Structure probing data (DMS and 2A3) for a 177-nucleotide construct. The RNA was probed in 150 mM KOAc, 10 mM MgCl2 and 150 mM bicine (pH 8.5) at 24 C. High 2A3 reactivity points to a flexible backbone, as in loops and unpaired stretches. Reactivities are given for positions 27 through 126. For DMS, 5,948 sequencing reads were counted. For 2A3, 3,578 sequencing reads were counted.
RNA sequence: GGGAACGACUCGAGUAGAGUCGAAAAGAUAUGGAUUAUAUCGAGAGAGUUGGAAACGAACUACGUUGCUUGUCGGAAACGACAAACAACGCGUUUCCAACUCUCUAAGACAGUAUAAUCCUAAGUCCAAUUAAAGUAACUUCGGUUACUUUAAUUGAAAAGAAACAACAACAACAAC
Reactivity to DMS in 0.01 (KOAc 150mM, MgCl2 10mM, bicine 150mM(pH8.5), 24C), signal-to-noise 6, nucleotides 027 to 126: g000a100u010a300u000g000g000a030u000u000a000u000a010u000c070g010a040g000a020g010a020g020u010u000g000g000a010a010a010c010g020a130a110c200u020a300c030g010u000u000g010c020u000u000g020u000c000g000g000a090a080a220c020g010a030c000a010a000a000c010a000a000c000g010c030g000u000u000u000c000c000a000a000c000u000c000u000c000u000a030a050g010a130c300a100g010u010a000u000a000a010u000c000c000u010a090a130g000u000c060
Reactivity to 2A3 in 0.01 (KOAc 150mM, MgCl2 10mM, bicine 150mM(pH8.5), 24C), signal-to-noise 1, nucleotides 027 to 126: g050a020u100a060u180g010g010a010u000u010a000u030a010u090c050g020a000g000a000g000a010g010u000u020g010g010a020a000a000c010g010a050a060c210u210a040c300g020u000u030g000c030u020u000g020u020c030g060g050a150a030a110c000g000a000c020a000a010a000c000a000a000c000g000c030g000u000u030u000c000c000a010a000c000u010c000u000c000u000a000a000g000a000c010a000g000u030a000u000a020a000u000c030c000u020a090a020g040u030c010